The record gives the reactivity of an RNA of 177 nucleotides to DMS and 2A3.
For DMS the reverse transcriptase was MarathonRT.
RNA sequence: GGGAACGACUCGAGUAGAGUCGAAAAGAUAUGGAAUCCCAAGAGCAACAGCCCUACCAGUCGGAAACGACUGAGGGACAUGCUCUGGGAUUCCUAAGUCAAACCUGCUUUCUUCGGAAAGCAGGAACUAUAGAUCUCAGUUCGCUGAGAUCUAUAGAAAAGAAACAACAACAACAAC
Reactivity to DMS in 0.01 (KOAc 150mM, MgCl2 10mM, bicine 150mM(pH8.5), 24C), signal-to-noise 6, nucleotides 027 to 126: g000a010u000a060u010g000g000a030a000u000c000c000c010a020a080g000a010g020c000a150a060c240a150g010c010c000c000u000a170c300c020a000g000u000c000g010g000a010a020a030c010g010a010c000u000g010a020g010g000g000a010c040a150u020g020c000u000c000u000g000g000g000a010u000u000c000c000u000a000a040g000u000c010a130a130a190c000c000u000g000c000u000u000u000c000u000u010c270g030g000a020a000a000g020c000a000g000g000a010a050
Reactivity to 2A3 in 0.01 (KOAc 150mM, MgCl2 10mM, bicine 150mM(pH8.5), 24C), signal-to-noise 6, nucleotides 027 to 126: g000a000u010a010u050g000g000a000a010u000c020c000c020a070a110g010a010g010c110a050a150c090a220g000c010c000c000u100a260c150c020a000g000u010c000g000g000a010a010a010c000g000a000c000u010g000a000g010g040g070a010c020a170u300g000c000u000c000u000g010g000g000a000u010u000c000c000u000a000a000g000u000c000a030a050a200c000c000u010g000c000u030u010u010c010u040u090c300g180g010a020a000a000g000c000a000g000g000a000a000
As a SHAPE reagent, 2A3 marks flexible, mostly unpaired nucleotides at the ribose 2'-OH.